[RMDB]
RNA sequence: GGGAACGACUCGAGUAGAGUCGAAAACCGUAUCGGUUCGCCGAUACGGAAAAGUUAAUGCUGCUAACACACAUGUUAAGCAUGGCGGUGGUAUCGCUGGUGGGACUCCCCAGUUCGCUGGGGAGAAAUACUCCCUGAUGUUCGCAUCAGGGAGUAUAAAAGAAACAACAACAACAAC
Reactivity to DMS in 0.01 (KOAc 150mM, MgCl2 10mM, bicine 150mM(pH8.5), 24C), signal-to-noise 3, nucleotides 027 to 126: c000c010g000u020a010u000c000g030g000u000u010c200g030c010c000g010a010u000a000c000g000g000a010a020a050a150g010u000u010a040a110u000g010c030u010g000c070u000a030a050c050a070c170a100c190a060u000g000u010u010a070a060g010c010a030u000g000g010c070g010g000u010g010g000u000a050u000c040g020c030u010g010g000u000g000g000g010a300c010u010c010c000c000c000a000g000u000u020c200g020c010u000g000g010g010g000a020g000a000a030
Reactivity to 2A3 in 0.01 (KOAc 150mM, MgCl2 10mM, bicine 150mM(pH8.5), 24C), signal-to-noise 1, nucleotides 027 to 126: c010c020g000u000a000u000c000g000g020u070u040c140g050c050c000g000a000u000a020c010g040g010a050a050a000a010g060u060u150a080a030u110g040c000u020g000c020u070a060a000c030a000c020a020c020a130u120g020u030u110a070a030g000c020a010u030g010g000c060g000g080u110g030g020u030a050u120c040g000c030u010g030g020u070g030g040g000a050c000u000c020c000c000c000a000g000u040u010c140g020c070u010g000g020g010g000a010g000a000a000
Source: RMDB library M2PK50, as collected in RNAgym. The record gives the reactivity of an RNA of 177 nucleotides to DMS and 2A3. For DMS the reverse transcriptase was MarathonRT.